[RMDB]
RNA sequence: GGGAACGACUCGAGUAGAGUCGAAAAUUAAAUCGACUCCUUCAAUCAUACACGGAACGAAGGAUCUCUUUACGAGAUUAAGCCAAUUGCGUAUAGACUCCAAAAGACAAUGGUAUUUUGUCACUGGGCGUGAAUUCUGGUUCGCCAGAAUUCACGCAAAAGAAACAACAACAACAAC
Reactivity to 2A3 in 0.01 (KOAc 150mM, MgCl2 10mM, bicine 150mM(pH8.5), 24C), signal-to-noise 1, nucleotides 027 to 126: u000u000a000a020a100u090c010g070a100c000u000c000c000u080u040c000a000a230u070c000a040u040a300c040a130c060g040g000a130a080c020g010a050a000g050g000a030u000c000u000c020u000u300u180a120c080g000a000g000a000u000u090a070a100g000c000c000a000a160u110u000g000c000g000u000a020u030a040g040a000c000u000c030c030a020a000a000a000g040a000c000a070a030u000g010g000u120a210u070u050u000u010g020u000c000a000c030u000g030g000
Chemical mapping of a 177-nucleotide RNA with 2A3. 2A3 adducts were read by reverse transcription with SuperScript II with manganese. The reactions ran in a buffer of 150 mM KOAc, 10 mM MgCl2 and 150 mM bicine (pH 8.5), at 24 C.